[RMDB]
RNA sequence: GGGAACGACUCGAGUAGAGUCGAAAACUUGGGAUUCUGCAUAAUUUGAUGAAUGGGCUUGUAGAUGAGCACCCUAUUGUGGAAGGAAAGGGCAAUGAAUCCAUUCUGGCUGUUAAUAUCGACCGCACGAUCGGAUAGUGUUCGCACUAUCCGAUCGAAAAGAAACAACAACAACAAC
Reactivity to 2A3 in 0.01 (KOAc 150mM, MgCl2 10mM, bicine 150mM(pH8.5), 24C), signal-to-noise 1, nucleotides 027 to 126: c000u070u090g000g000g030a030u040u040c000u040g040c010a050u040a080a170u270u080u110g130a090u130g010a070a030u020g020g000g070c020u060u020g070u110a040g020a250u160g000a000g000c050a070c000c020c030u050a150u090u170g120u180g020g030a010a060g000g010a050a080a070g070g000g040c010a000a060u080g030a000a000u010c030c040a040u040u030c000u020g030g000c000u010g050u080u050a090a030u080a130u160c080g000a010c000c020g010c050a060
Reactivity to DMS in 0.01 (KOAc 150mM, MgCl2 10mM, bicine 150mM(pH8.5), 24C), signal-to-noise 1, nucleotides 027 to 126: c070u000u010g010g010g000a110u020u000c040u000g030c010a120u010a080a050u000u010u000g020a120u000g000a040a100u000g000g020g000c070u000u000g020u010a130g010a140u000g010a100g010c030a070c070c030c010u020a050u030u000g030u000g010g000a030a090g020g030a060a150a070g000g000g030c070a070a070u020g020a050a090u000c000c020a090u000u020c020u000g010g030c000u000g000u000u000a040a140u000a110u000c070g000a080c030c040g030c140a180